Chemical mapping of a 207-nucleotide RNA with 2A3.
RNA sequence: GGGAACGACUCGAGUAGAGUCGAAAAAGCCUGGUCGAUACGUCGACCAGGCAAUGCCGCCACAACGGCUUCUUGGCGUGGCGGAUCUCAUCCAAUGGAGCAACGCUCCGGAUACGUCCGGAGCGAAAAAAGCUCUGCUUCUUCGGAAGCAGAGCAACUAAUACACACAGUUCGCUGUGUGUAUUAGAAAAGAAACAACAACAACAAC
Reactivity to 2A3 in 0.01 (KOAc 150mM, MgCl2 10mM, bicine 150mM(pH8.5), 24C), signal-to-noise 2, nucleotides 027 to 156: a010g300c000c000u010g000g000u000c000g010a010u010a060c130g100u000c000g010a000c000c000a000g010g010c000a000a000u010g030c000c010g020c000c000a000c010a090a030c070g110g000c060u070u050c070u050u090g020g020c020g000u010g000g000c030g010g010a010u030c030u020c020a060u120c080c040a080a130u210g060g000a010g000c000a000a080c030g010c000u000c020c010g020g000a030u040a030c230g050u010c000c010g010g020a000g000c000g030a010a000a000a000a000a000g000c000u000c000u000g000c000u000u000c000u020u050c110g050g010a000a000g000c000a010g000a000g000c000a000a000

For 2A3, 1,203 sequencing reads were counted. It was measured as part of the RMDB library M2RFPK.